[RMDB]
RNA sequence: GGGAACGACUCGAGUAGAGUCGAAAAGAAGAGAAUACAUGGCUGACAAAACCCUGUCCCAACCUCCACGUGGUGUCGGCUGGAUAAUGCUGCAUUAUGUUGCAUUUAUCAUCUGGGAAGGAGAAGACACUACCGUCGCAUUCGUGCGACGGUAGUGAAAAGAAACAACAACAACAAC
Reactivity to DMS in 0.01 (KOAc 150mM, MgCl2 10mM, bicine 150mM(pH8.5), 24C), signal-to-noise 1, nucleotides 027 to 126: g000a000a050g000a050g000a030a070u030a150c200a040u000g000g000c030u000g040a050c050a120a020a140a050c040c000c010u000g000u000c050c000c000a080a110c090c030u020c020c040a090c170g060u000g000g060u000g000u000c000g000g000c010u000g000g000a020u000a010a030u000g000c050u010g000c030a290u020u030a100u010g010u020u000g000c000a000u030u030u080a010u000c000a200u000c010u000g000g000g070a120a110g020g030a070g030a230a050g000a190
Reactivity to 2A3 in 0.01 (KOAc 150mM, MgCl2 10mM, bicine 150mM(pH8.5), 24C), signal-to-noise 3, nucleotides 027 to 126: g130a020a060g080a000g070a090a060u130a170c080a050u040g000g000c010u030g020a000c020a010a110a040a100c000c000c000u030g100u020c000c000c000a010a030c010c010u030c030c000a130c140g140u130g000g000u030g000u030c010g010g000c010u030g000g010a010u030a000a050u030g000c010u040g010c000a060u180u050a150u300g030u030u000g000c010a000u030u050u060a040u030c030a020u000c020u030g000g000g060a030a030g010g040a050g000a050a020g070a010
Description:
The record gives the reactivity of an RNA of 177 nucleotides to DMS and 2A3. The RNA was probed in 150 mM KOAc, 10 mM MgCl2 and 150 mM bicine (pH 8.5) at 24 C. The data come from the RNA Mapping Database (RMDB), library OK1LIB. High DMS reactivity at an A or C suggests that its Watson-Crick edge is free.